[RMDB]
RNA sequence: GGGAACGACUCGAGUAGAGUCGAAAAAAGGCAUGGUUAUUCAAAACCGUUCAAAGCAUACGACGCUCGUCGUUAGGUUUUGCUUUGAACGGUCGCACGCAGGAAUGUGUGUGGGGUUCCGGAAACGCAUGGGUAUCUAGUUCGCUAGAUACCCAUGAAAAGAAACAACAACAACAAC
Reactivity to 2A3 in 0.01 (KOAc 150mM, MgCl2 10mM, bicine 150mM(pH8.5), 24C), signal-to-noise 1, nucleotides 027 to 126: a000a000g100g000c080a040u090g040g000u100u110a060u180u120c040a000a010a070a110c000c000g010u010u010c000a010a010a010g020c000a020u000a010c020g020a000c010g070c060u180c200g300u050c000g010u100u060a140g000g100u080u120u070u060g000c000u010u000u000g000a000a000c000g010g000u000c020g000c000a010c000g040c020a010g000g120a110a100u030g010u040g000u010g000u030g010g040g000g000u010u000c030c000g020g020a070a080a010c080g000
Reactivity to DMS in 0.01 (KOAc 150mM, MgCl2 10mM, bicine 150mM(pH8.5), 24C), signal-to-noise 2, nucleotides 027 to 126: a060a080g010g020c030a020u000g010g000u010u010a080u010u000c110a080a060a080a060c000c000g020u000u010c000a010a000a010g000c000a010u000a030c000g000a010c000g010c040u020c300g010u010c010g010u000u000a060g040g010u000u000u000u000g010c000u000u000u000g000a010a010c000g000g000u000c020g010c000a020c040g000c020a020g000g030a130a100u010g020u000g010u000g030u000g020g020g010g000u000u000c020c010g010g020a070a100a050c210g010
Description:
This 177-nucleotide RNA was probed chemically with 2A3 and DMS. The data come from the RNA Mapping Database (RMDB), library RFMREP. For 2A3, 2,195 sequencing reads were counted. The DMS profile rests on 3,114 reads. Conditions: 150 mM KOAc, 10 mM MgCl2 and 150 mM bicine (pH 8.5), 24 C.